This 177-nucleotide RNA was probed chemically with DMS and 2A3. The reactions ran in a buffer of 150 mM KOAc, 10 mM MgCl2 and 150 mM bicine (pH 8.5), at 24 C. It was measured as part of the RMDB libraries RFM100 and RFMREP.
RNA sequence: GGGAACGACUCGAGUAGAGUCGAAAAUCAUAUUACUAGCCAUCGCACGAAAUUAAUAGGAUGGCACGUCCUCAUCUUAGAUGGAACAACCACGUCAUCUCACGGGUGGAUCCAUUCAUUGAUAGUGGGUAGACAGAAGUUUCGACUUCUGUCUACCAAAAGAAACAACAACAACAAC
Reactivity to DMS in 0.01 (KOAc 150mM, MgCl2 10mM, bicine 150mM(pH8.5), 24C), signal-to-noise 3, nucleotides 027 to 126: u020c140a180u060a080u040u040a080c120u010a170g000c020c010a010u020c020g000c120a190c220g000a090a040a160u050u030a050a080u020a160g020g020a000u000g000g020c090a070c130g030u020c040c030u000c100a030u000c040u000u010a130g010a000u000g030g020a050a070c040a120a020c010c000a070c030g000u020c210a130u030c160u010c240a020c040g010g000g040u020g010g020a040u000c000c000a020u030u000c000a090u000u000g020a030u000a080g020u000g000
Reactivity to 2A3 in 0.01 (KOAc 150mM, MgCl2 10mM, bicine 150mM(pH8.5), 24C), signal-to-noise 6, nucleotides 027 to 126: u090c020a020u110a070u200u140a070c090u060a050g000c020c000a010u010c030g090c110a100c180g140a100a100a140u240u200a100a120u190a160g180g000a010u010g000g000c000a000c010g030u020c000c020u020c010a070u000c030u040u100a030g000a030u000g000g000a000a080c040a060a080c030c000a300c070g110u090c030a190u040c050u050c090a060c030g010g010g020u020g030g010a040u000c000c000a000u060u100c020a070u020u110g040a010u020a080g140u110g070